Source: RMDB library M2RFPK, as collected in RNAgym. Structure probing data (2A3 and DMS) for a 207-nucleotide construct.

RNA sequence: GGGAACGACUCGAGUAGAGUCGAAAAGCUCUGUAAUGGGAUGGGAUCCGAAGCACCAUUGAGGGAUAAUACAGGCUCUCCCAUCCAACUCCUAUUCCAACACGUCCUCGUCGUACAGAGUGGUAACUAAGGUAUAGCUCCUUCGGGAGCUAUACAACAUUAUAACCCCGUUCGCGGGGUUAUAAUGAAAAGAAACAACAACAACAAC
Reactivity to 2A3 in 0.01 (KOAc 150mM, MgCl2 10mM, bicine 150mM(pH8.5), 24C), signal-to-noise 2, nucleotides 027 to 156: g000c000u000c000u010g040u050a140a130u180g150g000g000a020u000g000g000g030a050u200c030c030g030a060a020g070c120a080c060c000a070u090u130g070a200g080g020g000a040u070a150a010u200a250c140a060g000g000c010u020c010u000c030c010c020a000u000c000c000a010a010c010u020c010c060u130a090u040u120c050c020a040a010c030a040c060g040u090c000c050u060c050g030u030c010g000u020a000c000a010g000a020g000u020g000g070u080a070a030c080u040a180a000g040g000u000a000u010a000g010c000u020c010c000u000u040c070g060g000g000a000g000c000u000a000u000a000c000a020a000
Reactivity to DMS in 0.01 (KOAc 150mM, MgCl2 10mM, bicine 150mM(pH8.5), 24C), signal-to-noise 2, nucleotides 027 to 156: g030c020u010c020u000g030u000a050a120u000g030g040g000a030u000g010g000g010a090u010c050c100g030a140a100g020c050a040c010c030a190u000u000g020a140g030g010g000a140u010a050a130u000a100c090a140g010g000c080u000c050u010c010c000c000a090u010c010c010a090a030c030u000c030c000u000a100u000u020c020c010a130a110c050a080c040g010u000c010c020u000c040g000u000c030g000u000a040c030a080g000a050g020u000g010g000u000a060a090c070u010a080a150g020g000u000a010u000a000g000c010u000c010c000u000u010c300g050g010g020a000g020c010u000a000u010a000c000a030a160
For DMS the reverse transcriptase was MarathonRT.
For 2A3 the reverse transcriptase was SuperScript II with manganese.